[RMDB]
RNA sequence: GGGAACGACUCGAGUAGAGUCGAAAAGAUAUGGAUUACAGCAUCGAUCUAACUCAGAGUCGGAAACGACUCUGAGGUUAGGGAGCUGUUGUCCUAAGUCAAAGUAUUGUGCUUCGGCACAAUACAAUCUUCACGUUACCUUCGGGUAACGUGAAGAAAAAGAAACAACAACAACAAC
Reactivity to DMS in 0.01 (KOAc 150mM, MgCl2 10mM, bicine 150mM(pH8.5), 24C), signal-to-noise 1, nucleotides 027 to 126: g010a010u000a300u020g000g000a000u000u000a000c000a010g010c000a190u000c220g000a100u050c030u010a000a080c000u020c010a010g010a000g000u010c000g000g000a020a120a150c000g010a010c000u000c000u000g030a040g000g000u000u000a000g000g000g020a040g020c010u000g020u000u000g010u010c010c000u010a020a100g000u010c050a140a140a060g000u000a060u000u010g010u010g000c020u000u010c210g060g020c020a000c000a000a000u000a000c010a080a050